[RMDB]
RNA sequence: GGGAACGACUCGAGUAGAGUCGAAAAUACCGCAGGCCUGCGGUGCGGCAGUGUGGAGACCUGCCGUAAGCCGUGUUGUUUUGACAACCGGGAGAAAACGUAUGCGGAGGCAGCGCUUUCAGGGUCUAAAAGUAUGGGAUCUUCGGAUCCCAUACAAGGCUAAUCAUCAGUUCGCUGAUGAUUAGCCAAAAGAAACAACAACAACAAC
Reactivity to 2A3 in 0.01 (KOAc 150mM, MgCl2 10mM, bicine 150mM(pH8.5), 24C), signal-to-noise 2, nucleotides 027 to 156: u090a000c000c000g030c020a010g020g050c030c010u010g000c010g000g000u010g000c000g000g000c010a010g000u040g010u100g280g090a050g050a060c000c000u000g000c000c000g000u000a010a010g030c020c020g060u070g010u150u010g010u000u150u090u300g100a000c010a000a020c010c000g000g020g000a010g000a000a020a000a000c010g020u070a260u170g020c120g020g080a020g180g060c000a000g000c010g020c020u010u020u000c010a020g010g010g000u010c020u020a040a070a040a060g000u000a000u010g010g000g000a000u030c000u030u010c090g110g010a000u000c000c010c000a000u000a000c000a000a000
This 207-nucleotide RNA was probed chemically with 2A3. The RNA was probed in 150 mM KOAc, 10 mM MgCl2 and 150 mM bicine (pH 8.5) at 24 C.